[RMDB]
RNA sequence: GGGAACGACUCGAGUAGAGUCGAAAAUGUAGUUUGCCCCGUGAACUGAGUUGGUAUCUACCCACAUCAAGAUUGGUCUGCCCUCUAAGACUAUACUUUCAGGGAUCAUUUCUAUAGUUCAUUACUAGACUUGUCUUCUGUUCGCAGAAGACAAGUCAAAAGAAACAACAACAACAAC
Reactivity to DMS in 0.01 (KOAc 150mM, MgCl2 10mM, bicine 150mM(pH8.5), 24C), signal-to-noise 1, nucleotides 027 to 126: u000g030u010a030g010u000u000u000g020c050c000c070c220g010u010g000a050a060c030u000g000a060g030u000u000g020g000u010a070u030c140u040a130c030c010c020a070c100a100u000c110a110a020g010a070u000u000g000g000u010c020u000g010c060c030c010u000c040u000a070a090g010a070c070u000a080u000a130c020u010u000u000c110a060g020g010g000a110u000c030a050u020u000u000c020u000a080u000a060g000u000u020c070a050u000u000a140c060u000a070
Reactivity to 2A3 in 0.01 (KOAc 150mM, MgCl2 10mM, bicine 150mM(pH8.5), 24C), signal-to-noise 1, nucleotides 027 to 126: u050g030u070a040g020u070u120u140g090c000c010c000c030g100u060g010a050a020c010u050g040a030g090u060u020g070g010u140a170u040c070u090a060c000c000c010a070c020a060u090c050a020a080g010a090u020u020g030g050u020c030u070g130c020c030c010u000c000u000a020a000g020a010c000u080a070u050a240c010u060u030u030c060a000g010g030g020a090u060c060a040u000u160u000c040u040a080u080a050g010u010u010c040a010u070u100a030c040u040a050
Source: RMDB library OK2TRN, as collected in RNAgym. Chemical mapping of a 177-nucleotide RNA with DMS and 2A3. In probing experiments dimethyl sulfate is read out at A N1 and C N3, which are open when not base-paired.